[RMDB]
RNA sequence: GGGAACGACUCGAGUAGAGUCGAAAAGUAAUCCAAAUAAUCCUACAGGUACAUAUUUUAAUCAUGAGAGCUUAGAUUCGUUUUUAUCUCAAGUACCUCCACAUGUACCAGUAAUUAUAGAUGAAGCCUAGCACAGCACUUUCGAGUGCUGUGCUAGAAAAGAAACAACAACAACAAC
Reactivity to 2A3 in 0.01 (KOAc 150mM, MgCl2 10mM, bicine 150mM(pH8.5), 24C), signal-to-noise 2, nucleotides 027 to 126: g080u120a120a020u000c010c010a050a130a050u050a020a020u080c090c080u010a000c000a030g000g010u020a000c000a000u140a110u020u120u000u300a140a130u130c130a200u300g030a050g000a000g000c000u020u010a020g000a010u110u080c070g060u100u000u140u170u200a000u000c000u000c060a000a000g020u030a110c020c010u020c020c010a200c110a020u000g000u000a000c000c000a000g030u000a020a020u070u000a070u050a050g120a160u100g010a060a040g000c000